About this RNA
Conditions: 150 mM KOAc, 10 mM MgCl2 and 150 mM bicine (pH 8.5), 24 C. Structure probing data (DMS) for a 177-nucleotide construct. In probing experiments dimethyl sulfate is read out at A N1 and C N3, which are open when not base-paired.

RNA sequence: GGGAACGACUCGAGUAGAGUCGAAAAAUUUUCUAGUGUAUUUGUGUAGAGGUGUUUAUAGUAUUCUGUGAUGGUAGUUUGUAUUUCUGUGGGAUCACUGGUGACAUCCCCUUUAUUAUUUUUAUUGGACUAACACACAAUUCGUUGUGUGUUAGUCAAAAGAAACAACAACAACAAC
Reactivity to DMS in 0.01 (KOAc 150mM, MgCl2 10mM, bicine 150mM(pH8.5), 24C), signal-to-noise 1, nucleotides 027 to 126: a130u000u000u000u000c020u020a110g020u000g000u000a040u010u010u010g020u010g010u000a060g020a090g000g010u010g010u000u000u020a050u020a070g000u010a070u000u000c140u000g000u030g000a070u010g010g020u000a040g000u000u000u000g020u000a080u000u000u000c090u010g000u000g020g010g010a060u000c070a040c080u010g000g010u000g010a110c110a090u000c010c010c000c160u000u010u010a060u000u010a080u000u010u000u010u000a120u050u010g010